[RMDB]
RNA sequence: GGGAACGACUCGAGUAGAGUCGAAAAGGGGGCUCCAAGGCUUCUGUCGUGGCUGUUACGACUGGUCGCACAUCAUCCUUUGCUCUGAAUGAAGGUGGCUUGAAUGCACGCUUCUUCACGGAUAAGCCUCCUUCCUAGGUUUCGACCUAGGAAGGAGAAAAGAAACAACAACAACAAC
Reactivity to DMS in 0.01 (KOAc 150mM, MgCl2 10mM, bicine 150mM(pH8.5), 24C), signal-to-noise 1, nucleotides 027 to 126: g000g010g020g000g030c030u020c070c130a130a150g000g010c030u000u010c050u020g000u000c060g010u000g010g030c090u020g020u000u000a070c050g010a050c020u000g010g040u010c060g050c050a060c100a080u020c080a080u000c010c030u000u000u000g020c090u000c100u000g010a030a050u010g000a020a020g010g030u000g020g020c040u020u000g000a080a100u010g000c020a060c030g020c030u000u000c020u000u010c050a050c150g000g000a060u010a090a100g010c130
Reactivity to 2A3 in 0.01 (KOAc 150mM, MgCl2 10mM, bicine 150mM(pH8.5), 24C), signal-to-noise 2, nucleotides 027 to 126: g000g000g000g010g020c000u040c050c030a050a040g050g030c000u020u000c000u110g010u020c080g010u000g010g080c060u130g060u150u110a060c080g020a040c130u000g090g000u060c010g000c040a040c030a020u070c000a030u060c020c010u130u070u140g020c030u020c070u070g080a090a080u160g030a010a050g110g010u060g020g040c050u050u070g200a180a100u130g080c050a040c120g170c030u000u000c000u000u030c020a040c000g110g000a080u030a170a010g010c010
This 177-nucleotide RNA was probed chemically with DMS and 2A3. The RNA was probed in 150 mM KOAc, 10 mM MgCl2 and 150 mM bicine (pH 8.5) at 24 C. The data come from the RNA Mapping Database (RMDB), library OK2TRN. High DMS reactivity at an A or C suggests that its Watson-Crick edge is free. 2A3 adducts were read by reverse transcription with SuperScript II with manganese.